An RNA of 177 nucleotides, treated with 2A3 and DMS and read out base by base.

[RMDB]
RNA sequence: GGGAACGACUCGAGUAGAGUCGAAAAUGUGUGCUCGAGAGCCUCCCUGUCCGACAGAGCUUUUAGAUCUUCUGAUCUUUCCCUGGAGGAUAUCGCUUAUCCUUCAAGCGAUUCUCGGAAUAAUUAAUCGUAUUUGUCAAUUCGUUGACAAAUACGAAAAAGAAACAACAACAACAAC
Reactivity to 2A3 in 0.01 (KOAc 150mM, MgCl2 10mM, bicine 150mM(pH8.5), 24C), signal-to-noise 3, nucleotides 027 to 126: u130g070u010g020u030g040c030u030c060g070a060g020a010g050c040c020u020c010c000c030u010g050u000c000c010g020a010c020a040g060a040g000c000u030u040u030u070a030g000a030u000c010u230u070c150u300g000a020u000c000u020u030u040c030c000c000u010g040g000a020g010g010a010u020a020u040c050g000c070u060u040a050u120c030c030u080u090c040a020a010g000c000g020a010u030u000c030u010c010g060g090a050a100u160a120a070u120u140a050a070
Reactivity to DMS in 0.01 (KOAc 150mM, MgCl2 10mM, bicine 150mM(pH8.5), 24C), signal-to-noise 4, nucleotides 027 to 126: u010g020u010g010u010g000c010u000c020g010a110g010a190g020c040c030u000c010c010c050u000g000u000c020c020g000a120c090a040g000a130g000c140u000u010u000u000a040g010a020u000c000u000u010c280u010g000a020u000c010u000u000u000c010c020c010u000g030g020a080g000g010a050u010a020u010c140g010c070u000u000a050u000c060c080u000u000c070a030a020g010c030g000a070u000u010c060u000c000g010g010a080a070u010a080a090u000u000a060a160

Values cover nucleotides 27 to 126.